[RMDB]
RNA sequence: GGGAACGACUCGAGUAGAGUCGAAAAGCAACCGUGGCCCAGGGGUGGGGUGCAGGUGGUUGCAAUUUGUGGUAAGAACGAUGCAGCACGGAAUUCCAUCAAUGAGGUUUUCGGAAAUCCAGUUGACCUACGAAGGUUCAUUCGUGAACCUUCGUAGAAAAGAAACAACAACAACAAC
Reactivity to 2A3 in 0.01 (KOAc 150mM, MgCl2 10mM, bicine 150mM(pH8.5), 24C), signal-to-noise 1, nucleotides 027 to 126: g060c010a040a100c000c030g030u030g030g000c010c020c030a010g060g020g020g030u010g020g010g030g020u000g020c010a070g000g240u070g040g040u110u000g030c000a040a030u060u100u250g030u040g000g120u170a130a100g030a120a000c040g000a010u030g010c040a000g010c030a030c030g000g090a010a030u000u040c000c020a020u050c070a020a060u170g020a230g080g030u010u030u110u160c010g000g030a000a000a050u000c010c000a000g030u100u070g130a090c000
Reactivity to DMS in 0.01 (KOAc 150mM, MgCl2 10mM, bicine 150mM(pH8.5), 24C), signal-to-noise 1, nucleotides 027 to 126: g050c140a070a050c010c010g020u000g020g020c020c000c020a060g030g020g020g070u000g020g010g030g030u000g000c130a150g060g000u000g020g000u010u000g000c010a010a060u010u020u000g010u000g000g010u000a090a090g020a120a030c040g020a060u000g010c030a040g000c040a070c060g010g000a260a020u000u020c000c000a030u000c030a070a040u000g000a080g050g010u020u000u000u000c050g010g000a030a050a100u000c010c010a150g000u000u000g000a110c220
An RNA of 177 nucleotides, treated with 2A3 and DMS and read out base by base. The RNA was probed in 150 mM KOAc, 10 mM MgCl2 and 150 mM bicine (pH 8.5) at 24 C. 2A3 is a SHAPE reagent: it acylates the 2'-hydroxyl of flexible nucleotides of all four kinds. The 2A3 profile rests on 1,198 reads.